[RMDB]
RNA sequence: GGGAACGACUCGAGUAGAGUCGAAAACGAAUUUCCAUCUUCGGAUGGAAAUUCGAAACCGUUCAACUCGCCGUCCUGCGCGACGGCUACGGGAGAAAACAUCCUUAAACGUUCGCGUUUAAGGAUGGAAACACUAAUCGUUCGCGAUUAGUGUUUCAAAAGAAACAACAACAACAAC
Reactivity to 2A3 in 0.01 (KOAc 150mM, MgCl2 10mM, bicine 150mM(pH8.5), 24C), signal-to-noise 5, nucleotides 027 to 126: c000g000a000a000u000u010u000c000c000a010u010c000u040u050c170g130g000a010u020g000g000a000a000a000u000u010c000g000a010a000a000c010c000g020u080u080c050a080a060c050u030c100g000c000c000g010u020c020c030u300g150c090g030c160g060a010c000g000g000c000u000a000c020g040g000g010a070g080a030a070a000a010c000a000u000c000c000u000u000a000a010a010c010g010u040u060c260g010c010g060u000u010u000a010a000g000g000a000u000g000
Reactivity to DMS in 0.01 (KOAc 150mM, MgCl2 10mM, bicine 150mM(pH8.5), 24C), signal-to-noise 6, nucleotides 027 to 126: c020g000a000a000u000u000u000c010c000a000u000c000u000u010c210g020g010a020u000g010g000a000a000a000u000u000c000g010a030a070a180c020c010g030u010u010c080a050a190c050u000c170g000c000c000g000u000c010c020u010g020c300g010c140g020a000c010g010g000c010u000a000c110g000g010g000a270g000a070a050a080a300c000a010u000c000c000u000u010a000a010a010c000g010u010u010c220g020c010g010u000u000u000a000a000g000g000a000u000g000
Annotation
Chemical mapping of a 177-nucleotide RNA with 2A3 and DMS. The reactions ran in a buffer of 150 mM KOAc, 10 mM MgCl2 and 150 mM bicine (pH 8.5), at 24 C.